[RMDB]
Structure probing data (DMS and 2A3) for a 207-nucleotide construct. The DMS profile rests on 8,865 reads. The RNA was probed in 150 mM KOAc, 10 mM MgCl2 and 150 mM bicine (pH 8.5) at 24 C.
RNA sequence: GGGAACGACUCGAGUAGAGUCGAAAACGGUGCGUUACGAUACCACGGUACUAACAUCAUAUGCAUAGUCGUGUAUGGCCGUGGCUACGCGCGACGCGUCAUGAUUAGUGUUGUGAUGCUGAUUAAUCAUACGUGACGUCAGUUAGUAUCGCGCAUGCGUUCUUGAGGAAUUCGUUCCUCAAGAACGAAAAGAAACAACAACAACAAC
Reactivity to DMS in 0.01 (KOAc 150mM, MgCl2 10mM, bicine 150mM(pH8.5), 24C), signal-to-noise 3, nucleotides 027 to 156: c060g010g020u000g020c040g000u000u010a080c060g020a160u010a060c000c020a050c010g000g030u000a170c050u010a070a060c060a120u000c040a080u000a090u000g040c060a150u000a130g030u000c100g050u000g020u010a060u000g010g020c000c040g010u000g050g000c010u010a040c130g000c000g000c000g020a010c040g000c050g000u000c030a070u000g000a080u000u000a080g020u000g000u000u000g000u000g000a130u010g000c030u010g000a100u000u010a080a090u000c000a050u000a060c010g010u000g040a080c050g000u000c070a120g030u010u010a040g010u000a030u000c020g020c010g000c000a060u000g010
Reactivity to 2A3 in 0.01 (KOAc 150mM, MgCl2 10mM, bicine 150mM(pH8.5), 24C), signal-to-noise 9, nucleotides 027 to 156: c050g030g000u020g000c010g020u050u090a060c050g010a040u030a050c010c020a010c000g010g020u060a100c050u090a090a090c030a110u110c020a030u060a020u120g040c050a100u100a210g110u140c090g010u010g010u040a060u100g020g000c010c020g040u050g060g000c020u040a030c060g030c010g000c000g000a010c010g010c010g020u030c080a010u020g050a050u020u080a020g050u030g050u110u140g050u070g070a100u160g040c030u030g030a050u060u070a060a010u030c020a030u040a090c140g050u040g050a020c020g020u050c020a040g010u030u110a020g000u020a010u020c000g000c010g000c020a020u090g060